[RMDB]
RNA sequence: GGGAACGACUCGAGUAGAGUCGAAAACGGCCCCAUCGUCGGGGUGUUCAAGGACCUACUCGGAAUCCACUCCCCGUCGCGGGUGUUCUUCGGGUUCGGUGUGAACACGGUUGAGGGCUACAUCAACGACCCUUCUAUCGUUCGCGAUAGAAGGGUCAAAAGAAACAACAACAACAAC
Reactivity to DMS in 0.01 (KOAc 150mM, MgCl2 10mM, bicine 150mM(pH8.5), 24C), signal-to-noise 1, nucleotides 027 to 126: c100g020g010c020c000c000c000a110u000c150g020u020c150g030g000g000g030u000g020u010u000c070a110a150g020g010a080c010c010u000a070c070u010c040g030g000a040a060u000c030c080a130c060u000c010c000c010c120g010u030c110g000c140g000g000g010u010g020u000u010c000u000u000c040g000g000g020u000u000c100g030g010u000g030u010g020a010a040c030a020c090g000g000u000u000g000a160g000g010g010c060u000a070c110a100u010c120a060a100c150